[RMDB]
About this RNA:
The data come from the RNA Mapping Database (RMDB), library RFM100. The record gives the reactivity of an RNA of 177 nucleotides to 2A3.

RNA sequence: GGGAACGACUCGAGUAGAGUCGAAAACCAUUCGCUAGAAUGUUGCAGGUGGAGAUUUCGCUCUUAUGUUUUCUCGAUGCCUCCCAUUCCUAUCGUUCUUGGAACUUCCUUCCUCUUCCUUUUUUUUAAACAACGUGUCUUUCGAGACACGUUGUUUAAAAGAAACAACAACAACAAC
Reactivity to 2A3 in 0.01 (KOAc 150mM, MgCl2 10mM, bicine 150mM(pH8.5), 24C), signal-to-noise 2, nucleotides 027 to 126: c020c000a030u160u110c040g000c020u130a050g070a200a100u100g150u120u030g040c090a020g020g000u110g030g090a110g000a100u000u070u070c060g050c040u030c020u090u120a160u190g100u010u020u100u020c060u000c050g060a060u070g040c000c020u040c000c000c000a000u020u100c000c000u100a050u080c050g050u100u030c040u000u060g040g000a070a090c050u070u030c000c000u010u060c000c000u020c000u030u010c030c020u000u000u010u000u000u000u000u070